[RMDB]
RNA sequence: GGGAACGACUCGAGUAGAGUCGAAAAACGGUCAUAUACGUAUGACCGAAUGAGCAUAACAGGGCCACCCCAAAGCGUUCACAUUGUGGCCCCUGUCUGAUUCUGGUAAAUCUGCGAGUUCUGCUAAAUUAGGUAACUCUCUUCGGAGAGUUACCAAGAUGACUAAAUACUUCGGUAUUUAGUCAUCAAAAGAAACAACAACAACAAC
Reactivity to DMS in 0.01 (KOAc 150mM, MgCl2 10mM, bicine 150mM(pH8.5), 24C), signal-to-noise 2, nucleotides 027 to 156: a110c050g000g050u010c010a020u000a030u000a120c200g080u000a030u000g000a020c000c010g050a010a040u010g010a110g000c060a060u020a050a100c030a100g000g040g010c020c040a050c050c040c020c000a040a080a100g030c040g030u010u000c050a100c030a170u030u000g000u000g020g000c120c010c030c000u000g000u000c060u040g030a070u000u010c040u000g000g000u000a060a080a080u000c040u000g020c010g010a090g020u000u000c140u000g000c050u000a080a070a090u010u010a140g020g030u000a010a010c000u000c000u000c020u000u000c280g040g010a020g000a020g010u000u000a000c010c000a020a090
Reactivity to 2A3 in 0.01 (KOAc 150mM, MgCl2 10mM, bicine 150mM(pH8.5), 24C), signal-to-noise 4, nucleotides 027 to 156: a000c010g000g000u000c020a000u020a000u030a050c210g100u030a010u010g000a000c000c000g030a000a060u060g010a000g030c040a060u040a180a030c020a030g010g020g000c010c020a030c000c020c010c040a080a150a050g120c070g080u150u130c050a070c050a210u120u160g000u010g010g000c000c010c020c000u040g030u010c040u030g030a100u090u000c010u080g020g040u060a050a070a090u040c030u060g040c050g050a070g070u060u010c020u030g010c040u070a040a120a200u190u100a080g000g000u000a000a000c000u000c010u000c000u030u050c080g020g000a000g000a000g020u000u000a000c000c000a000a000

Structure probing data (DMS and 2A3) for a 207-nucleotide construct. Conditions: 150 mM KOAc, 10 mM MgCl2 and 150 mM bicine (pH 8.5), 24 C. For 2A3 the reverse transcriptase was SuperScript II with manganese. For 2A3, 3,354 sequencing reads were counted.